This 177-nucleotide RNA was probed chemically with DMS. The reactions ran in a buffer of 150 mM KOAc, 10 mM MgCl2 and 150 mM bicine (pH 8.5), at 24 C. Source: RMDB library TTRINS, as collected in RNAgym. For DMS, 1,062 sequencing reads were counted. For DMS the reverse transcriptase was MarathonRT.
[RMDB]
RNA sequence: GGGAACGACUCGAGUAGAGUCGAAAAGAUAUGGACCAGAACUACAGGUCCUUUACGCGUUGAAAAACCUCUACUUUCGGAAACGAAAGUAGAGGUUUGGAGCGUAUUCGCCUGCUGGUCCUAAGUCGAUCAGUUAGUGGUUCGCCACUAACUGAUCAAAAGAAACAACAACAACAAC
Reactivity to DMS in 0.01 (KOAc 150mM, MgCl2 10mM, bicine 150mM(pH8.5), 24C), signal-to-noise 1, nucleotides 027 to 126: g000a050u010a300u000g000g010a000c000c030a020g000a150a030c080u010a300c000a050g000g050u020c190c070u010u000u000a000c000g010c000g020u010u010g020a150a120a020a000a000c010c000u030c000u000a020c000u010u000u000c000g010g010a110a060a220c020g000a000a020a030g020u000a000g000a010g000g000u000u000u000g000g000a130g000c000g020u000a000u010u000c150g000c010c000u000g000c020u000g000g010u000c010c010u000a020a050g030u000c080